[RMDB]
The data come from the RNA Mapping Database (RMDB), library M2RFPK. Structure probing data (2A3 and DMS) for a 207-nucleotide construct. The DMS profile rests on 1,480 reads. The RNA was probed in 150 mM KOAc, 10 mM MgCl2 and 150 mM bicine (pH 8.5) at 24 C. The 2A3 profile rests on 4,079 reads.
RNA sequence: GGGAACGACUCGAGUAGAGUCGAAAAACACCAAAACUGAAAACGGAAGGCAAUCCUUCCACGACGAUACUUACUUUCCUUUAAUCGUCGUUACUACUGGCAUAGCCACAAAGGAGAACAAACAUGAGCGCGGACACUGACUUCGGUCAGUGUCCAACCCUCUCAUUAGGUUCGCCUAAUGAGAGGGAAAAGAAACAACAACAACAAC
Reactivity to 2A3 in 0.01 (KOAc 150mM, MgCl2 10mM, bicine 150mM(pH8.5), 24C), signal-to-noise 5, nucleotides 027 to 156: a000c100a120c030c040a050a080a030a070c120u210g080a090a070a050a030c060g000g000a000a010g020g010c140a050a170u300c010c000u010u000c000c010a000c000g000a000c000g000a000u030a070c060u100u030a050c020u060u150u060c020c000u070u090u090a040a010u000c000g010u000c000g000u030u040a050c030u020a030c020u020g020g000c050a280u110a110g020c010c020a040c070a030a050a010g050g020a030g020a070a050c040a140a060a010c050a090u220g080a050g130c140g010c090g050g000a000c000a010c000u010g000a000c000u020u080c140g040g010u000c000a000g000u000g000u000c000c000a000a000
Reactivity to DMS in 0.01 (KOAc 150mM, MgCl2 10mM, bicine 150mM(pH8.5), 24C), signal-to-noise 1, nucleotides 027 to 156: a050c030a190c060c040a050a040a050a280c160u000g000a040a140a140a030c080g000g000a030a000g130g030c100a200a090u000c030c000u000u000c010c000a140c000g010a010c010g010a040u000a040c100u000u000a090c090u000u000u000c060c040u000u000u000a110a110u020c010g000u000c000g000u000u000a040c030u000a120c090u000g030g010c080a120u000a120g050c040c020a000c060a020a070a070g000g030a150g030a060a070c060a100a100a040c100a040u000g000a160g000c010g000c050g020g000a030c000a010c000u000g010a050c000u000u010c300g110g040u000c020a000g020u000g020u000c000c000a010a010